[RMDB]
RNA sequence: GGGAACGACUCGAGUAGAGUCGAAAAUGCCAUGCAGCCUGUCGGACUCGCGGGUGAAGGCUUGGUAGUGUCGUCCAAGGGUCCAGGCAUCUUCCUGCAAGGACUGGCUGUGCAUGGGAAGGACGGACUCUGGACGUGCAUUCGUGCACGUCCAGAGAAAAGAAACAACAACAACAAC
Reactivity to DMS in 0.01 (KOAc 150mM, MgCl2 10mM, bicine 150mM(pH8.5), 24C), signal-to-noise 2, nucleotides 027 to 126: u000g010c010c020a050u000g000c010a100g010c020c000u000g010u010c050g010g020a230c090u000c020g000c300g000g010g040u010g000a100a110g010g000c000u010u000g020g000u000a030g010u000g010u000c010g000u010c020c030a090a300g020g010g000u110c010c020a120g020g020c060a070u010c090u000u000c020c010u000g000c080a160a110g000g010a040c020u000g010g030c000u000g040u010g020c080a030u010g000g010g020a070a100g030g000a060c080g000g000a150
Reactivity to 2A3 in 0.01 (KOAc 150mM, MgCl2 10mM, bicine 150mM(pH8.5), 24C), signal-to-noise 1, nucleotides 027 to 126: u080g080c000c000a030u010g000c000a020g030c020c000u040g010u010c020g020g080a120c000u000c050g000c000g000g020g000u030g030a090a050g100g000c070u030u020g220g000u140a080g000u070g040u100c060g000u000c000c000a070a140g030g020g000u130c020c010a020g020g000c000a050u010c000u190u090c000c000u030g050c070a070a000g100g000a030c010u000g000g050c030u040g140u120g090c030a000u030g040g030g010a050a010g070g040a050c060g070g020a050
Conditions: 150 mM KOAc, 10 mM MgCl2 and 150 mM bicine (pH 8.5), 24 C. This 177-nucleotide RNA was probed chemically with DMS and 2A3. The 2A3 profile rests on 1,176 reads. The DMS profile rests on 1,337 reads. Source: RMDB library OK2TRN, as collected in RNAgym. DMS adducts were read by reverse transcription with MarathonRT.